Structure probing data (2A3) for a 207-nucleotide construct. Conditions: 150 mM KOAc, 10 mM MgCl2 and 150 mM bicine (pH 8.5), 24 C.
RNA sequence: GGGAACGACUCGAGUAGAGUCGAAAAGGGCCAUGUACCUAUCCAAAAUGAGAUCCCAUCUUGCACACUGUGCUAAUUUGAGAUUCUCAUGCCUCCUACUUGGAGAGAUCUGGACUAGAAGUCAGUGAAUAGGUCGUUUCUUUCGAGAAACGACCAAGUACAGCACACUCUUCGGAGUGUGCUGUACAAAAGAAACAACAACAACAAC
Reactivity to 2A3 in 0.01 (KOAc 150mM, MgCl2 10mM, bicine 150mM(pH8.5), 24C), signal-to-noise 1, nucleotides 027 to 156: g010g030g000c030c040a090u110g030u090a090c030c000u010a040u000c010c000a150a010a000a000u010g000a020g000a000u000c000c000c010a000u010c010u010u030g000c030a030c030a090c180u210g010u000g060c030u180a000a130u000u000u000g050a030g000a010u220u130c020u000c000a010u050g040c000c010u010c000c010u070a260c150u150u260g040g000a010g000a030g020a010u000c020u090g030g000a020c020u120a080g060a200a020g140u080c060a020g030u040g050a060a040u140a100g010g010u000c000g000u000u010u000c010u030u050u100c200g060a010g010a020a060a000c000g000a000c010c010a040a010